[RMDB]
RNA sequence: GGGAACGACUCGAGUAGAGUCGAAAACCGGAAUGGUUCCGCCGUGAUCGGGCCAUGCAAUAGUUGCCAACGACAACUAUGCUCCGGUUGCUCAGGCACCGUAACGCUGCUUGAAAGACCACAUGAAUUAGCGCGACAUUGUUCGCAAUGUCGCGAACCUGUUUACACGCUUCGGCGUGUAAACAGGAAAAGAAACAACAACAACAAC
Reactivity to 2A3 in 0.01 (KOAc 150mM, MgCl2 10mM, bicine 150mM(pH8.5), 24C), signal-to-noise 2, nucleotides 027 to 156: c010c000g000g030a050a060u120g000g000u240u300c020c030g000c010c110g250u300g070a170u110c000g020g020g040c010c000a000u100g040c020a140a300u000a000g000u000u000g030c020c070a080a080c220g070a130c010a010a000c040u000a000u000g000c000u000c000c020g000g000u000u040g000c000u000c000a010g010g040c010a010c040c050g110u130a110a130c220g040c080u000g020c000u000u040g010a000a040a060g080a010c000c000a050c060a250u240g120a110a140u200u140a070g100c010g000c000g000a000c000a000u000u030g010u040u060c050g000c120a020a000u000g030u000c000g000c010g000a020a110